[RMDB]
RNA sequence: GGGAACGACUCGAGUAGAGUCGAAAACCGUAGGACGUCGGGUGUUGUCAGCUGUCGCUCCUUCGAAAGAGGGAAAAGUCAGCUUGGAUUUACAUCUCUAGCGUGCGUCCUAAACGGAAAACCAUGUUUCGUACGGUUCGCCGUACGAAACAUGGAACGAAUAUAAUAUGUUCGCAUAUUAUAUUCGAAAAGAAACAACAACAACAAC
Reactivity to DMS in 0.01 (KOAc 150mM, MgCl2 10mM, bicine 150mM(pH8.5), 24C), signal-to-noise 2, nucleotides 027 to 156: c010c000g020u000a050g000g020a010c020g020u000c020g050g000g020u000g000u000u000g010u000c010a070g000c010u000g010u000c030g010c160u010c010c000u030u000c000g000a180a160a270g000a060g030g000g000a010a040a050a110g000u000c010a000g010c020u000u010g030g000a080u000u000u000a040c030a030u000c010u010c070u010a160g020c140g020u000g020c000g020u000c000c000u000a010a040a100c010g010g000a100a110a120a200c000c000a020u010g040u010u000u000c010g000u010a000c000g000g000u000u010c300g030c000c040g000u000a010c020g010a010a010a010c000a000u000g000g010a010a050
Reactivity to 2A3 in 0.01 (KOAc 150mM, MgCl2 10mM, bicine 150mM(pH8.5), 24C), signal-to-noise 7, nucleotides 027 to 156: c000c000g010u010a010g000g010a000c000g000u030c050g040g000g010u010g010u010u020g010u020c010a000g000c000u000g010u020c010g010c140u000c010c000u010u010c020g060a110a080a030g000a010g020g020g000a020a120a080a050g020u020c000a000g000c010u040u110g090g000a020u230u120u150a000c000a010u010c040u020c120u190a080g110c050g160u200g030c000g000u030c000c000u030a090a110a000c030g060g030a070a080a000a040c000c010a000u010g000u000u000u000c000g000u000a010c020g010g050u030u060c270g010c090c010g000u010a000c000g000a010a000a000c000a000u000g000g000a000a010
Structure probing data (DMS and 2A3) for a 207-nucleotide construct. For 2A3, 17,288 sequencing reads were counted. The data come from the RNA Mapping Database (RMDB), library RNAMAK. For DMS, 8,813 sequencing reads were counted.